[RMDB]
RNA sequence: GGGAACGACUCGAGUAGAGUCGAAAAGAUAUGGAGCGACGGGAGGCUGUAUCAUCGACGAAGCUCUCUAUUCGGAAACGAAUAGAGAGCAGAGAUGAUUCAGCCAUCGAUCGUCGCUCCUAAGUCACGUGUAAGUUGAGUUCGCUCAACUUACACGAAAAGAAACAACAACAACAAC
Reactivity to DMS in 0.01 (KOAc 150mM, MgCl2 10mM, bicine 150mM(pH8.5), 24C), signal-to-noise 1, nucleotides 027 to 126: g000a070u000a300u000g010g000a010g010c020g030a020c000g000g030g030a060g030g020c000u020g000u000a010u000c000a010u000c000g000a300c220g000a200a190g000c000u000c000u000c000u000a000u010u020c000g020g000a200a100a240c010g000a000a000u000a000g000a010g010a020g040c000a030g000a120g000a000u080g000a000u000u000c000a030g020c000c000a040u000c150g000a060u010c000g010u000c020g010c000u000c000c000u010a000a050g000u010c060a260
Structure probing data (DMS) for a 177-nucleotide construct. The data come from the RNA Mapping Database (RMDB), library TTRINS. DMS adducts were read by reverse transcription with MarathonRT.